[RMDB]
RNA sequence: GGGAACGACUCGAGUAGAGUCGAAAAGUGAUAAUUUGGAGGAUUGCGGUGUAACUGAUGGGAUCGAGUACGAUUCGCCUGAUGAGGCUGUUCGUAGGUGGAAUCGCCGAGCAUGACCCCCGAGCAGCACGCCGCCAAGAUUCGUGAACUGGAAGCGGCGUGGCAUUCAAUUCGUUGAAUGCCACGCAAAAGAAACAACAACAACAAC
Reactivity to 2A3 in 0.01 (KOAc 150mM, MgCl2 10mM, bicine 150mM(pH8.5), 24C), signal-to-noise 4, nucleotides 027 to 156: g080u050g060a090u060a240a130u060u120u180g060g010a060g010g030a050u050u090g000c020g020g020u030g000u070a110a080c020u040g050a060u110g030g020g000a010u030c020g010a050g150u120a140c040g000a020u010u040c030g050c080c010u060g040a070u050g000a010g050g100c040u030g080u060u010c010g030u070a030g010g040u100g120g000a040a030u020c030g010c060c030g030a040g030c130a150u130g070a140c000c000c000c000c020g010a000g000c000a000g000c000a000c020g000c000c000g000c000c000a040a010g050a100u030u040c010g030u050g050a060a070c040u080g070g000a070a020g060c040g060
Reactivity to DMS in 0.01 (KOAc 150mM, MgCl2 10mM, bicine 150mM(pH8.5), 24C), signal-to-noise 2, nucleotides 027 to 156: g040u000g010a100u000a040a110u030u010u040g000g030a100g000g000a170u000u000g020c070g000g020u000g000u000a120a110c040u000g000a140u040g010g070g020a090u010c030g010a210g050u010a060c070g000a070u000u000c020g020c010c030u000g000a130u000g000a060g040g040c070u000g010u000u000c040g040u000a050g000g010u000g030g020a230a040u000c020g040c050c040g000a160g020c030a120u000g010a150c000c010c000c000c090g000a070g010c010a070g020c040a110c030g010c020c010g000c020c090a040a110g000a170u000u000c050g050u000g000a070a080c100u000g020g010a130a090g010c070g020

An RNA of 207 nucleotides, treated with 2A3 and DMS and read out base by base. It was measured as part of the RMDB library OK3TST. DMS (dimethyl sulfate) methylates the pairing face of unpaired adenines and cytosines. The reactions ran in a buffer of 150 mM KOAc, 10 mM MgCl2 and 150 mM bicine (pH 8.5), at 24 C. For 2A3, 2,761 sequencing reads were counted.